This 207-nucleotide RNA was probed chemically with 2A3. For 2A3 the reverse transcriptase was SuperScript II with manganese. For 2A3, 914 sequencing reads were counted. The RNA was probed in 150 mM KOAc, 10 mM MgCl2 and 150 mM bicine (pH 8.5) at 24 C. High 2A3 reactivity points to a flexible backbone, as in loops and unpaired stretches.
[RMDB]
RNA sequence: GGGAACGACUCGAGUAGAGUCGAAAAAGUCACCUAUUACGAUAGGUGACAUUUGAACCAGCGAACAAUUCAGUUGCGAGAUUCGAGGGUUCAGUCUGAAUCAUAGUAGCCAUUACGAUGGCUACAACUCACUCCCGACUGUUCGCAGUCGGGAGAAGGUUUCUUGUAGGUUCGCCUACAAGAAACCAAAAGAAACAACAACAACAAC
Reactivity to 2A3 in 0.01 (KOAc 150mM, MgCl2 10mM, bicine 150mM(pH8.5), 24C), signal-to-noise 1, nucleotides 027 to 156: a000g000u010c000a010c000c000u000a010u010u070a050c250g050a000u000a010g000g000u010g010a000c000a000u020u030u070g070a040a030c010c000a030g190c030g000a000a010c010a050a160u000u040c000a020g000u040u010g020c000g010a000g000a020u000u010c000g000a030g050g030g090u140u260c010a010g060u080c000u010g000a000a010u050c110a090u100a160g010u010a000g000c010c000a030u030u050a050c210g070a010u020g000g000c000u000a000c000a000a000c010u050c020a070c010u000c000c000c000g000a000c000u030g040u070u040c300g000c060a000g000u000c000g000g000g000a000g010a000a000